[RMDB]
About this RNA:
This 177-nucleotide RNA was probed chemically with 2A3 and DMS.

RNA sequence: GGGAACGACUCGAGUAGAGUCGAAAAUUAAAUAGCGUAAUCCACAUUGAGAAUGUACGCUAAGUGUGUGUUGUAUGGGCAACGUCCAAUUGAACACACACACAGUUGGACCUAAUGUCGAAAAAAACUAAACACUCUUGUUCGCAAGAGUGUUUAGAAAAGAAACAACAACAACAAC
Reactivity to 2A3 in 0.01 (KOAc 150mM, MgCl2 10mM, bicine 150mM(pH8.5), 24C), signal-to-noise 3, nucleotides 027 to 126: u150u080a030a040a090u100a010g030c010g000u010a020a000u030c040c050a070c130a290u110u240g070a140g050a250a060u210g050u110a000c010g000c000u020a080a090g010u000g000u010g020u010g000u010u060g100u070a110u060g020g030g020c090a300a150c200g010u010c010c010a010a020u020u080g130a080a000c010a000c020a000c010a000c000a010c000a080g170u140u110g060g040a020c020c010u100a150a110u210g070u120c040g070a150a000a000a010a000a000a030
Reactivity to DMS in 0.01 (KOAc 150mM, MgCl2 10mM, bicine 150mM(pH8.5), 24C), signal-to-noise 4, nucleotides 027 to 126: u010u000a070a090a120u000a010g010c000g000u000a040a030u010c020c060a130c180a190u010u020g000a100g010a070a040u000g010u000a010c000g010c000u000a020a120g010u000g020u010g010u000g000u000u010g040u000a080u000g010g000g000c020a120a080c290g010u000c000c000a020a090u010u000g000a030a010c020a000c010a000c020a030c010a030c150a070g000u000u010g000g010a090c030c060u000a060a110u010g020u000c090g010a020a000a050a070a080a070a130
The RNA was probed in 150 mM KOAc, 10 mM MgCl2 and 150 mM bicine (pH 8.5) at 24 C.
DMS adducts were read by reverse transcription with MarathonRT.